Structure probing data (DMS and 2A3) for a 177-nucleotide construct.
Values cover nucleotides 27 to 126.
The reactions ran in a buffer of 150 mM KOAc, 10 mM MgCl2 and 150 mM bicine (pH 8.5), at 24 C.
RNA sequence: GGGAACGACUCGAGUAGAGUCGAAAAGUCGGUCAUCCAAGUGCCUUACAAAGUGAAUGACAUCAUGGACCGCUGGAUCCUGCAGAUGGGCUUCCCCGUCAUCACCGUGGACACCCAGACAGGCACCCUCAAUACUCCGAUUCGUCGGAGUAUUGAGAAAAGAAACAACAACAACAAC
Reactivity to DMS in 0.01 (KOAc 150mM, MgCl2 10mM, bicine 150mM(pH8.5), 24C), signal-to-noise 4, nucleotides 027 to 126: g020u000c040g000g020u000c040a130u000c070c110a160a140g010u000g010c010c000u000u010a120c110a060a100a120g000u010g000a060a040u000g000a080c040a050u000c080a080u000g000g000a060c030c030g010c050u010g010g020a150u010c040c030u000g000c110a070g000a080u000g010g010g020c140u000u000c040c010c050c130g010u000c040a050u000c070a040c080c070g020u000g020g020a080c080a060c060c030c040a100g000a060c110a050g000g000c080a060c050c130
Reactivity to 2A3 in 0.01 (KOAc 150mM, MgCl2 10mM, bicine 150mM(pH8.5), 24C), signal-to-noise 4, nucleotides 027 to 126: g070u060c050g010g020u030c030a080u050c070c030a070a020g030u010g030c010c010u070u030a080c090a080a160a030g050u080g080a170a120u050g040a010c010a050u120c030a050u150g080g020a030c010c000g020c050u030g030g050a130u040c040c000u010g040c050a070g050a230u160g020g040g020c060u040u050c020c000c000c010g030u000c010a070u040c010a000c040c030g080u060g020g020a030c010a050c050c020c000a010g030a050c030a010g020g000c010a020c050c000

Source information:
As a SHAPE reagent, 2A3 marks flexible, mostly unpaired nucleotides at the ribose 2'-OH.